RNA sequence: GGGAACGACUCGAGUAGAGUCGAAAAUUGGGAGGCCGAGGCGGACAGAUCAUGAGGUCAAGAGAUUGAGACCAUCCUGGCCAAUAUGGUGAAGCCCGUCUCUACUAAAAAUACAGAAAUUAGCCGGGCAUGUUGGCACGCGCCUGUAGUCCCAGGACAUAAUUUUAUACUUCGGUAUAAAAUUAUGAAAAGAAACAACAACAACAAC
Reactivity to 2A3 in 0.01 (KOAc 150mM, MgCl2 10mM, bicine 150mM(pH8.5), 24C), signal-to-noise 2, nucleotides 027 to 156: u120u070g050g020g000a010g090g030c080c100g000a000g000g010c000g000g000a000c000a040g070a040u040c020a010u010g020a020g000g010u030c080a180a040g110a010g010a050u030u220g050a110g050a050c100c000a020u000c000c000u020g000g020c000c020a010a020u150a080u140g020g000u030g020a070a020g000c000c000c000g000u000c000u000c000u000a040c000u070a100a070a000a000a030u110a050c030a050g090a040a130a090u080u080a040g020c070c010g000g000g030c080a030u080g020u100u090g150g010c000a000c030g060c040g020c020c050u020g020u020a040g030u010c010c020c000a000g010g010a000
Reactivity to DMS in 0.01 (KOAc 150mM, MgCl2 10mM, bicine 150mM(pH8.5), 24C), signal-to-noise 1, nucleotides 027 to 156: u000u000g030g020g050a120g020g020c040c020g060a020g040g030c000g020g000a080c030a020g000a120u000c000a060u000g000a230g030g020u010c010a050a070g000a050g020a170u000u010g000a140g000a060c030c050a190u000c010c020u010g020g060c010c020a010a130u020a040u010g010g010u000g010a250a180g010c040c010c010g020u020c000u000c020u000a110c060u020a020a110a040a080a090u000a180c050a150g000a040a090a110u010u000a010g000c030c030g040g020g010c040a080u020g000u010u010g000g000c000a050c040g000c070g000c040c020u000g030u000a050g000u010c000c010c010a090g020g020a270
Structure probing data (2A3 and DMS) for a 207-nucleotide construct.
2A3 adducts were read by reverse transcription with SuperScript II with manganese.
Values cover nucleotides 27 to 156.
DMS adducts were read by reverse transcription with MarathonRT.
It was measured as part of the RMDB library OK3TST.